[RMDB]
RNA sequence: GGGAACGACUCGAGUAGAGUCGAAAAGGGAAUGGUGGUUUACCCCGUUAUCAAAUGAUUACCGGCCAAUAAUUGGCGAAACUCGUUUCGCGUUGGCUGCCUAAUUCAAGGAAUUAGCGUGCCUUCAAAGACAUCAAGAAGUUCGCUUCUUGAUGAAUCUACAAUACGACUUCGGUCGUAUUGUAGAAAAAGAAACAACAACAACAAC
Reactivity to DMS in 0.01 (KOAc 150mM, MgCl2 10mM, bicine 150mM(pH8.5), 24C), signal-to-noise 2, nucleotides 027 to 156: g040g020g010a050a050u000g040g020u000g000g030u000u010u010a110c040c000c030c010g010u020u000a120u000c070a090a080a170u000g020a140u000u000a020c000c000g040g000c010c010a010a110u000a060a230u000u020g060g020c000g000a040a040a020c040u000c210g040u000u000u000c040g050c050g000u020u000g010g000c010u010g000c090c000u000a020a050u000u000c090a100a140g020g030a050a060u000u000a050g000c040g000u000g030c050c020u000u020c060a070a080a140g010a160c000a010u000c010a010a010g000a020a040g020u000u010c300g020c010u000u010c010u000u010g000a000u010g010a030a070
Reactivity to 2A3 in 0.01 (KOAc 150mM, MgCl2 10mM, bicine 150mM(pH8.5), 24C), signal-to-noise 4, nucleotides 027 to 156: g070g000g010a070a060u110g020g040u050g050g040u050u090u220a130c030c010c010c030g020u060u080a120u080c060a090a120a100u170g030a050u060u030a030c070c020g020g000c010c030a050a040u290a120a110u150u160g040g000c020g030a040a040a050c090u060c130g050u010u010u010c050g000c030g020u000u010g010g000c020u040g010c020c000u020a000a010u020u020c100a130a110g120g030a060a030u020u000a020g030c040g080u050g010c020c000u010u010c030a080a070a050g100a040c010a000u000c000a000a000g000a010a000g000u040u070c100g020c140u000u000c000u000u010g000a000u000g000a000a020